[RMDB]
RNA sequence: GGGAACGACUCGAGUAGAGUCGAAAAGGUCAGGUCCGGCCGGAUGACCGAACACAUGAGACCUCGUUGGCGAUCUCUUGUGGAUUAGGAGCGAGACGACGUAUGUCGCAUUCGUCGAGCUCCGAAAGGCAUGCUUGUCGUUCGCGACGAGCAUGCCAAAAGAAACAACAACAACAAC
Reactivity to DMS in 0.01 (KOAc 150mM, MgCl2 10mM, bicine 150mM(pH8.5), 24C), signal-to-noise 3, nucleotides 027 to 126: g000g030u000c040a100g000g020u030c060c070g010g000c090c040g000g000a140u010g000a060c030c010g030a150a130c000a010c000a020u000g030a010g000a040c010c040u030c100g000u010u030g000g030c230g000a100u010c010u000c020u010u000g000u020g000g000a090u010u000a050g000g000a030g010c030g000a300g000a040c000g010a030c300g000u000a160u020g040u100c100g000c110a120u010u000c010g010u000c030g000a300g020c040u000c000c010g000a060a030a090
Reactivity to 2A3 in 0.01 (KOAc 150mM, MgCl2 10mM, bicine 150mM(pH8.5), 24C), signal-to-noise 4, nucleotides 027 to 126: g050g000u030c010a000g010g130u030c030c040g090g100c050c080g000g020a020u030g040a030c000c000g030a040a000c000a010c000a000u040g010a010g000a030c000c040u040c130g120u090u260g100g020c090g000a120u000c000u000c000u000u020g020u010g030g050a060u020u190a060g000g000a010g000c000g000a030g000a030c000g010a000c050g070u130a080u250g130u170c050g010c120a090u040u030c000g000u000c000g010a010g020c010u000c000c020g000a010a000a000
Record summary
The record gives the reactivity of an RNA of 177 nucleotides to DMS and 2A3. For 2A3, 2,284 sequencing reads were counted. The reactions ran in a buffer of 150 mM KOAc, 10 mM MgCl2 and 150 mM bicine (pH 8.5), at 24 C.